[RMDB]
RNA sequence: GGGAACGACUCGAGUAGAGUCGAAAAUGUGGAGGCUUGGAUGGAUCGAUACAAGUACUACCCUGAAACGCCACAAGGCCUAGCCAAGAUCAUUCAAAAAGCCCAUAAGGAAGGAGUGUGCGGUCUACGGUCAGUUUCCAGACUGGAGCAUCAAAUGUACCCUCCAUAGAUUCGUCUAUGGAGGGUAAAAAGAAACAACAACAACAAC
Reactivity to 2A3 in 0.01 (KOAc 150mM, MgCl2 10mM, bicine 150mM(pH8.5), 24C), signal-to-noise 3, nucleotides 027 to 156: u110g010u050g020g000a020g010g000c020u040u050g000g020a030u040g040g040a050u130c010g050a030u030a170c040a030a010g010u010a100c040u040a050c010c000c010u020g000a100a090a060c050g020c050c000a040c040a030a060g030g000c010c020u040a010g010c020c010a010a020g050a150u140c010a020u020u110c060a030a030a020a120a140g050c010c010c010a070u090a080a060g020g010a050a020g050g020a010g010u030g020u020g010c020g020g030u020c030u050a020c070g030g000u010c000a010g000u060u060u050c060c040a050g020a080c030u080g050g000a010g000c030a030u050c070a040a020a040u140g020
Reactivity to DMS in 0.01 (KOAc 150mM, MgCl2 10mM, bicine 150mM(pH8.5), 24C), signal-to-noise 3, nucleotides 027 to 156: u000g040u000g030g000a140g030g010c040u000u000g050g000a150u010g020g010a100u000c040g000a220u000a080c080a080a120g020u000a070c050u000a100c010c030c020u000g010a110a090a090c100g010c010c020a050c030a090a130g020g020c010c020u000a140g050c010c030a060a200g010a110u000c020a080u000u000c060a060a070a130a090a080g000c000c010c030a090u010a090a100g000g010a080a060g020g010a090g020u000g020u000g000c070g020g000u000c020u000a080c030g030g020u010c000a080g000u010u010u000c020c010a140g020a120c020u010g020g010a110g040c060a090u010c050a040a100a130u000g030
Notes: The record gives the reactivity of an RNA of 207 nucleotides to 2A3 and DMS. The DMS profile rests on 5,862 reads. Values cover nucleotides 27 to 156.